[RMDB]
RNA sequence: GGGAACGACUCGAGUAGAGUCGAAAAGAUGUGGUAAAGAUAGUGCAGCCUUGUGGCAAUAGCUCAGACACGAGUGAUUGUCCUGUCUGGGCUGAAGCUGUAAAAGAACCAUUUGUGCAAGUCAAUCACUAUGCUAAUUUUUCGAAAUUAGCAUAGUAAAAGAAACAACAACAACAAC
Reactivity to 2A3 in 0.01 (KOAc 150mM, MgCl2 10mM, bicine 150mM(pH8.5), 24C), signal-to-noise 9, nucleotides 027 to 126: g070a050u160g020u060g030g030u090a100a130a040g070a110u120a070g090u050g040c010a010g020c020c030u140u160g100u120g090g000c010a020a050u070a080g000c000u000c000a010g010a030c010a000c060g010a010g010u050g050a090u050u100g030u060c000c010u010g010u010c000u000g010g000g000c000u000g000a010a000g000c000u010g020u060a050a100a020a030g050a030a020c010c010a040u050u090u160g120u060g050c060a070a030g080u060c010a010a020u040c010
Reactivity to DMS in 0.01 (KOAc 150mM, MgCl2 10mM, bicine 150mM(pH8.5), 24C), signal-to-noise 9, nucleotides 027 to 126: g010a090u000g020u000g010g010u000a060a100a120g000a090u000a060g020u000g010c030a060g000c030c060u000u000g020u010g010g010c070a070a130u000a050g010c000u000c000a020g000a030c040a020c210g000a040g010u010g010a050u000u000g010u000c010c050u000g010u000c010u000g000g000g010c000u000g000a050a080g010c020u000g010u000a040a050a100a110g010a100a080c040c020a060u000u000u010g010u000g020c120a070a090g000u000c030a030a060u000c060
Description: Structure probing data (2A3 and DMS) for a 177-nucleotide construct.